An RNA of 207 nucleotides, treated with DMS and 2A3 and read out base by base. For 2A3 the reverse transcriptase was SuperScript II with manganese. For 2A3, 4,980 sequencing reads were counted. Reactivities are given for positions 27 through 156.
RNA sequence: GGGAACGACUCGAGUAGAGUCGAAAACGCUGGGUGGUGAUGCCGCAUGUUGUCAGGGAUUCAAAGAUCUGAAGCGCGCACGGAUCUUUGAAUCCCUUGGAUUUACAUGAUGGCACCACCACCUGUGCUGAAGCGCGCACGGCAACCGAAAGGUGCGGGGAAAUCAUAAGUUCGCUUAUGAUUUCCCAAAAGAAACAACAACAACAAC
Reactivity to DMS in 0.01 (KOAc 150mM, MgCl2 10mM, bicine 150mM(pH8.5), 24C), signal-to-noise 1, nucleotides 027 to 156: c050g010c030u000g000g000g050u010g010g030u010g010a020u000g000c000c010g000c000a040u010g020u000u000g020u010c090a180g030g010g000a020u000u010c000a020a030a010g010a010u010c000u000g010a090a060g030c020g020c060g010c040a300c030g010g010a000u000c000u000u010u000g000a030a010u000c010c000c000u080u000g020g010a030u000u000u000a010c000a030u010g010a090u020g030g010c010a000c000c000a000c020c000a010c000c000u000g030u040g060c030u010g010a080a050g010c010g060c000g060c040a300c070g020g010c030a060a120c030c030g010a160a200a160g040g040u000g000c030g030
Reactivity to 2A3 in 0.01 (KOAc 150mM, MgCl2 10mM, bicine 150mM(pH8.5), 24C), signal-to-noise 2, nucleotides 027 to 156: c030g000c010u020g020g000g010u000g010g000u010g000a020u020g000c000c000g010c000a000u020g020u010u060g070u080c170a110g020g000g000a000u000u000c000a000a000a000g000a000u000c000u030g070a220a040g070c000g000c000g000c010a010c000g000g000a000u000c020u000u000u020g000a010a000u020c000c000c000u000u040g000g000a000u070u030u180a010c000a000u020g120a260u100g140g000c000a000c010c000a010c000c010a000c000c000u000g000u000g000c000u040g000a110a040g010c010g000c000g000c000a020c020g000g010c020a030a040c020c000g060a040a030a050g010g010u010g000c000g020